[RMDB]
RNA sequence: GGGAACGACUCGAGUAGAGUCGAAAAAUCGCAUGGAGAAAGCGUAGGAAGGUUCUGCUGAUUUUUUGGCACUGCCUGCCAUCAGGCAAAUCCUUUAAUCUCCAAAGGUCCUGCUGCUUUAAAACAGCAUUUGAUCCAUCUUCGGAUGGAUCAAAUGAAAAGAAACAACAACAACAAC
Reactivity to 2A3 in 0.01 (KOAc 150mM, MgCl2 10mM, bicine 150mM(pH8.5), 24C), signal-to-noise 1, nucleotides 027 to 126: a020u110c050g010c080a060u090g020g010a030g020a100a180a000g060c050g070u060a060g040g090a030a020g060g000u100u060c040u050g000c000u010g090a150u150u050u100u050u150u090g010g000c010a040c090u070g050c020c020u010g000c040c000a120u160c030a010g030g040c000a000a000a140u060c000c000u050u010u030a070a050u020c010u000c010c000a090a090a020g040g030u030c000c000u020g010c040u000g000c000u110u060u090a030a020a000a000c000a000g070
Reactivity to DMS in 0.01 (KOAc 150mM, MgCl2 10mM, bicine 150mM(pH8.5), 24C), signal-to-noise 2, nucleotides 027 to 126: a090u010c060g010c070a260u000g000g020a020g000a030a070a090g020c190g010u000a070g010g010a080a070g000g010u000u010c140u000g040c000u000g000a020u010u000u010u000u000u040g010g030c030a030c140u010g000c070c070u000g010c030c050a050u010c210a090g010g000c010a040a090a110u000c010c000u000u000u010a080a160u000c020u000c020c010a000a100a180g010g000u000c030c010u000g000c010u000g010c000u000u000u010a070a080a140a070c030a030g010